[RMDB]
RNA sequence: GGGAACGACUCGAGUAGAGUCGAAAAGAUAAGAAAGGAAGGAGGAAACAUGAUGUCUAUUUUAACAUGCACCAUUCUUGUGCAGAUUUAUUAAUCAGUGGCACGAUUGCGAUUAGGAGACUUCCUCUCUCCAGUCGCAAUUCGUUGCGACUGGAGAAAAAGAAACAACAACAACAAC
Reactivity to DMS in 0.01 (KOAc 150mM, MgCl2 10mM, bicine 150mM(pH8.5), 24C), signal-to-noise 2, nucleotides 027 to 126: g000a070u020a020a120g000a020a090a080g020g000a020a070g000g000a000g010g010a080a080a150c200a000u020g000a030u000g000u000c050u020a080u000u050u020u000a020a190c200a150u030g040c010a060c040c270a010u030u030c160u030u000g000u000g010c050a080g000a120u020u000u010a030u030u000a040a130u070c050a030g010u000g000g010c000a000c000g050a020u000u000g000c050g010a030u010u000a030g020g000a030g010a090c060u010u000c040c070u000c090
Reactivity to 2A3 in 0.01 (KOAc 150mM, MgCl2 10mM, bicine 150mM(pH8.5), 24C), signal-to-noise 2, nucleotides 027 to 126: g000a010u260a070a060g000a060a100a010g010g000a050a050g000g050a080g010g130a020a020a030c100a040u190g000a120u100g030u030c010u120a110u110u210u060u010a090a020c050a020u180g020c000a020c000c030a120u180u230c130u040u250g000u020g000c010a000g010a120u030u170u170a160u040u210a130a000u060c030a030g000u210g150g000c080a000c020g040a040u000u010g000c030g000a020u010u080a140g000g000a000g070a000c010u090u000c060c000u050c000